This 207-nucleotide RNA was probed chemically with 2A3 and DMS. For 2A3, 1,033 sequencing reads were counted. The reactions ran in a buffer of 150 mM KOAc, 10 mM MgCl2 and 150 mM bicine (pH 8.5), at 24 C. 2A3 adducts were read by reverse transcription with SuperScript II with manganese.
RNA sequence: GGGAACGACUCGAGUAGAGUCGAAAAAGUUUAUCAACCGCGUCAUCUGGGAGAACUUCUACAAACCCAUCGUUUACGUUGGUACCGAUUCCGCCGACGAAGAAGAAAUCCUCCUUGAGGUUUCAUUGGUGUUUAAGAUUAAGGAAUUCGCACCUGACAUUUAACGCAAUUUCGAUUGCGUUAAAUGAAAAGAAACAACAACAACAAC
Reactivity to 2A3 in 0.01 (KOAc 150mM, MgCl2 10mM, bicine 150mM(pH8.5), 24C), signal-to-noise 3, nucleotides 027 to 156: a000g060u060u120u130a170u140c060a090a080c030c020g050c050g130u060c040a120u020c060u030g020g040g000a050g010a040a060c000u080u040c030u030a090c070a030a120a070c020c070c080a120u170c140g030u000u030u040a060c020g000u010u060g000g020u040a060c080c050g010a020u040u020c000c020g000c010c000g010a010c050g030a050a040g010a050a000g040a020a140a010u070c030c000u020c010c050u050u060g040a090g030g000u010u020u020c060a090u050u140g000g020u000g070u060u090u160a110a120g010a120u080u100a030a050g060g020a040a040u060u070c030g010c020a000c000c020u030g030a040
Reactivity to DMS in 0.01 (KOAc 150mM, MgCl2 10mM, bicine 150mM(pH8.5), 24C), signal-to-noise 2, nucleotides 027 to 156: a140g030u000u000u010a100u000c050a070a120c010c000g010c040g020u000c030a140u000c030u000g000g030g010a300g050a050a020c020u000u000c040u080a220c100a080a080a110c030c050c110a140u000c090g000u000u000u000a150c040g000u000u000g010g030u000a300c150c020g000a140u000u000c020c060g050c030c010g010a040c030g000a100a100g000a050a120g000a000a030a030u010c030c010u020c020c010u000u000g040a070g000g000u000u000u020c020a150u000u000g000g000u010g010u000u000u010a060a150g000a140u010u000a080a050g040g010a050a130u000u000c140g010c020a120c040c020u010g020a270